Source information: Source: RMDB library OK1LIB, as collected in RNAgym. The record gives the reactivity of an RNA of 177 nucleotides to 2A3. Values cover nucleotides 27 to 126.
[RMDB]
RNA sequence: GGGAACGACUCGAGUAGAGUCGAAAAGCGGGCGCAUCGUCUGCGUCGGCACCACGUCGCUGCGGCUGCUCGAAAGUGCGGCUGCCGAGGACGGCACGAUCAAGCCCUGGUCCGGCGCAACCGGCAAGCGUACCGGCAGGUUCGCCUGCCGGUACGCAAAAGAAACAACAACAACAAC
Reactivity to 2A3 in 0.01 (KOAc 150mM, MgCl2 10mM, bicine 150mM(pH8.5), 24C), signal-to-noise 1, nucleotides 027 to 126: g010c040g020g000g000c030g020c050a090u010c090g170u070c140u100g000c000g000u000c000g010g000c020a010c080c000a050c070g020u000c010g030c060u060g010c020g010g020c000u000g030c050u040c050g060a130a070a020g010u050g010c000g010g000c000u010g000c010c010g000a030g000g050a000c000g000g010c010a050c110g150a040u190c090a140a010g030c000c000c000u010g020g050u040c000c010g020g010c010g000c020a000a030c030c000g020g000c030a140a000
2A3 adducts were read by reverse transcription with SuperScript II with manganese. The reactions ran in a buffer of 150 mM KOAc, 10 mM MgCl2 and 150 mM bicine (pH 8.5), at 24 C.